Background:
Structure probing data (2A3 and DMS) for a 177-nucleotide construct.

[RMDB]
RNA sequence: GGGAACGACUCGAGUAGAGUCGAAAAGCGUUUAGCUUCGGCUAAACGCAAAUAAGCUGACCAGCUAUGAGGUCAUACAUCGUCAUAGGACAAAGAAAGAGAAAACACCUCUGUUCGCAGAGGUGAAUCCUUCUUAAGAGUUCGCUCUUAAGAAGGAAAAAGAAACAACAACAACAAC
Reactivity to 2A3 in 0.01 (KOAc 150mM, MgCl2 10mM, bicine 150mM(pH8.5), 24C), signal-to-noise 2, nucleotides 027 to 126: g000c000g010u000u000u000a000g000c000u040u040c170g070g000c000u000a000a020a000c010g000c000a010a000a010u010a020a010g080c050u030g030a000c000c000a010g060c010u020a030u040g020a020g000g020u020c030a030u100a150c100a080u120c110g120u000c000a030u040a040g020g100a080c080a010a140a040g150a070a110a000g130a010g050a040a120a000a020c010a000c000c000u000c010u010g020u040u060c210g000c060a000g000a000g000g000u000g000a000a000
Reactivity to DMS in 0.01 (KOAc 150mM, MgCl2 10mM, bicine 150mM(pH8.5), 24C), signal-to-noise 6, nucleotides 027 to 126: g010c010g020u000u010u000a000g010c000u000u000c200g030g010c010u010a000a000a010c000g000c000a010a020a050u010a100a130g010c180u000g010a080c010c010a170g010c020u000a020u010g020a060g010g010u000c050a090u000a090c210a060u010c120g020u000c000a020u000a020g010g010a150c190a070a080a080g010a050a090a060g000a110g010a080a080a090a150c000a010c000c000u000c000u000g000u000u010c200g020c010a020g000a000g000g010u000g000a020a050
Source information:
DMS adducts were read by reverse transcription with MarathonRT. It was measured as part of the RMDB library M2PK50.